[RMDB]
RNA sequence: GGGAACGACUCGAGUAGAGUCGAAAAUAUGGAGAGCUGUCCAGGCUGUGAGGGGAGCACUCGUAUUCUUUUGACCUUUGCUAGAAGAGGGAAUACAGCGCUCUCCCUCACAGUCUGUACAGCUCUCUACCGCGUUAGUGUUCGCACUAACGCGGUAAAAAGAAACAACAACAACAAC
Reactivity to DMS in 0.01 (KOAc 150mM, MgCl2 10mM, bicine 150mM(pH8.5), 24C), signal-to-noise 2, nucleotides 027 to 126: u050a180u020g000g000a000g030a000g030c000u000g000u000c030c010a000g000g030c000u030g030u000g000a030g000g000g000g000a050g010c000a050c030u010c230g030u000a000u000u000c000u000u000u010u030g000a300c270c070u010u050u110g060c300u050a100g000a030a290g000a070g000g020g000a020a010u000a000c010a070g030c080g010c000u000c000u060c000c000c020u000c000a000c020a000g000u000c000u030g000u000a040c000a020g000c000u000c000u000c000